The data come from the RNA Mapping Database (RMDB), library TTRINS. An RNA of 177 nucleotides, treated with DMS and read out base by base. The reactions ran in a buffer of 150 mM KOAc, 10 mM MgCl2 and 150 mM bicine (pH 8.5), at 24 C. The DMS profile rests on 1,090 reads.

RNA sequence: GGGAACGACUCGAGUAGAGUCGAAAAGAUAUGGAGUGAACUACAGCCUAUCAAGCGUUGAAAUAGUCCAUAAACUCGGAAACGAGUUUAUGGACUAUGGAGCUUGAAAUGGCUGCACUCCUAAGUCGUUGCCUAUUAUCUUCGGAUAAUAGGCAACAAAAGAAACAACAACAACAAC
Reactivity to DMS in 0.01 (KOAc 150mM, MgCl2 10mM, bicine 150mM(pH8.5), 24C), signal-to-noise 2, nucleotides 027 to 126: g020a080u010a300u010g010g030a000g000u000g020a050a100c080u020a300c000a040g010c000c010u020a300u000c010a000a000g010c000g000u000u000g000a120a120a010u010a030g020u020c000c000a030u000a000a000a030c000u010c010g000g000a070a110a300c000g020a030g020u000u000u000a010u010g010g000a000c000u010a000u000g010g000a030g010c000u000u010g030a000a030a240u020g000g000c000u010g000c030a010c000u000c000c000u060a000a160g000u000c140